[RMDB]
RNA sequence: GGGAACGACUCGAGUAGAGUCGAAAAGCAAGAUUUGAAUGAUAUCAUUCUUAAAAUUACAGGUAUCAAAGUGAUGAGCUUCCACAGUGAUUUAAGUACAGUUACAGGUGAACGUAUUAUCGUAUUCUCCGUUCACCAUGUUCGCAUGGUGAACGGAAAAAGAAACAACAACAACAAC
Reactivity to 2A3 in 0.01 (KOAc 150mM, MgCl2 10mM, bicine 150mM(pH8.5), 24C), signal-to-noise 1, nucleotides 027 to 126: g060c000a030a140g000a300u000u040u290g010a030a110u180g000a010u040a000u160c040a140u080u170c040u060u160a000a200a000a000u250u200a130c140a040g000g040u020a030u080c010a080a080a080g070u060g060a010u010g030a000g040c000u010u040c000c000a080c060a000g010u070g000a040u000u000u110a070a000g040u000a000c010a050g000u040u010a000c070a060g040g000u200g070a180a090c000g100u100a110u030u230a140u060c070g000u000a300u070u000c000